[RMDB]
RNA sequence: GGGAACGACUCGAGUAGAGUCGAAAAAUCCCUGGGUCCCCCUGAUGUCCAGUCCCUCCCCCGUCCGAGAGAAGGGAGACUCCGGAACUCCUGCCAUUUGAGGGACGAAGCCGCCACCGGGCGCUCCGACCAUCUGCCUUCGGGCAGAUGAAAAGAAACAACAACAACAAC
Reactivity to DMS in 0.01 (KOAc 150mM, MgCl2 10mM, bicine 150mM(pH8.5), 24C), signal-to-noise 6, nucleotides 027 to 129: a080u010c010c000c000u030g000g030g030u010c020c010c010c040c050u040g030a130u030g020u030c040c050a080g030u020c020c010c010u030c010c030c030c000c010g030u080c070c050g020a160g000a130g030a000a080g000g000g000a070g020a000c010u020c000c000g000g000a050a060c080u020c070c040u050g000c130c110a140u000u000u000g030a130g030g000g020a060c000g030a000a000g000c080c020g040c000c020a110c110c110g000g010g010c060g030c060u000c020c030g010a150c160
Reactivity to 2A3 in 0.01 (KOAc 150mM, MgCl2 10mM, bicine 150mM(pH8.5), 24C), signal-to-noise 4, nucleotides 027 to 129: a000u040c020c020c020u000g040g000g010u060c020c010c000c000c000u040g070a080u040g070u050c010c010a000g010u000c020c020c000u010c020c020c010c010c000g010u030c020c010g060a080g010a000g020a120a050g010g000g010a030g010a030c040u000c010c000g000g030a030a020c000u030c020c020u020g050c040c040a120u040u050u070g120a060g020g000g000a060c050g010a010a000g070c040c050g010c010c010a100c080c020g060g040g000c010g000c000u000c010c000g030a040c010

An RNA of 170 nucleotides, treated with DMS and 2A3 and read out base by base. For 2A3 the reverse transcriptase was SuperScript II with manganese. The DMS profile rests on 22,989 reads. The RNA was probed in 150 mM KOAc, 10 mM MgCl2 and 150 mM bicine (pH 8.5) at 24 C. For DMS the reverse transcriptase was MarathonRT.